Structure probing data (2A3 and DMS) for a 177-nucleotide construct. For DMS, 681 sequencing reads were counted.
RNA sequence: GGGAACGACUCGAGUAGAGUCGAAAAUGGGUUCCUUCCAUGACACGUGGGAAUUAUAGAAGCUACAAUUCAAGAUGAAAUUUGGGUGGGAACAGAGCCAAACCAUAUCACCUUCUUAAAGAUGAAGGACUUUAUGAACCUUCGGGUUCAUAAAGUCAAAAGAAACAACAACAACAAC
Reactivity to 2A3 in 0.01 (KOAc 150mM, MgCl2 10mM, bicine 150mM(pH8.5), 24C), signal-to-noise 1, nucleotides 027 to 126: u050g000g010g000u020u000c000c000u030u000c020c000a020u070g050a120c050a000c140g030u080g040g060g080a060a010u090u070a070u040a170g040a090a060g050c050u040a030c060a010a110u060u100c050a000a080g160a230u130g080a070a070a150u100u080u010g110g000g000u160g050g030g000a050a020c020a070g020a000g150c000c010a010a000a010c000c010a030u010a030u120c030a070c110c020u000u050c000u050u230a080a120a030g040a030u110g020a010a010g050
Reactivity to DMS in 0.01 (KOAc 150mM, MgCl2 10mM, bicine 150mM(pH8.5), 24C), signal-to-noise 1, nucleotides 027 to 126: u010g010g000g000u000u000c020c000u000u000c050c010a100u010g020a130c170a000c110g000u000g030g000g000a060a030u000u000a150u000a060g000a090a110g010c100u000a040c150a030a080u000u000c000a170a170g000a150u010g000a030a050a190u000u000u010g020g000g050u010g000g000g000a020a060c130a110g000a120g040c010c040a000a090a110c020c010a050u000a110u010c090a070c040c010u000u000c040u000u000a000a090a050g020a050u000g030a030a040g000
For DMS the reverse transcriptase was MarathonRT.